About this RNA: An RNA of 177 nucleotides, treated with DMS and 2A3 and read out base by base. The RNA was probed in 150 mM KOAc, 10 mM MgCl2 and 150 mM bicine (pH 8.5) at 24 C. DMS adducts were read by reverse transcription with MarathonRT.
RNA sequence: GGGAACGACUCGAGUAGAGUCGAAAAACGAGGCGAUACGUCGCCUCGAAUCUUCAGUGAUGAUUUAAUACAGUGACUUUCGUUCUUCUGAGAUUACUGAAGCCAACAUUUCUGUCCUGAGAAGAAACUGGUAGUUUAACUUCGGUUAAACUACCAGAAAAGAAACAACAACAACAAC
Reactivity to DMS in 0.01 (KOAc 150mM, MgCl2 10mM, bicine 150mM(pH8.5), 24C), signal-to-noise 2, nucleotides 027 to 126: a140c030g000a020g000g000c000g030a070u000a050c180g050u000c000g000c000c000u000c000g000a080a020u020c000u000u000c010a030g010u010g000a070u000g000a180u020u030u050a090a070u020a110c110a050g010u000g000a040c110u040u000u000c140g010u000u010c050u000u000c000u010g000a060g020a080u010u000a010c010u000g000a040a020g010c260c070a030a110c120a050u010u000u000c000u000g030u020c140c010u000g000a070g030a050a110g020a030a040a150
Reactivity to 2A3 in 0.01 (KOAc 150mM, MgCl2 10mM, bicine 150mM(pH8.5), 24C), signal-to-noise 5, nucleotides 027 to 126: a010c020g000a010g010g000c010g000a000u000a070c240g110u000c000g010c000c000u000c000g000a000a020u000c000u010u010c000a000g020u000g030a030u010g010a030u030u080u300a210a100u250a090c030a020g040u020g070a030c020u110u230u190c120g080u090u000c050u210u050c000u020g080a070g010a100u010u010a020c000u010g000a020a000g000c010c010a080a080c060a090u060u050u050c050u050g130u070c000c030u100g010a070g030a130a030g020a010a080a010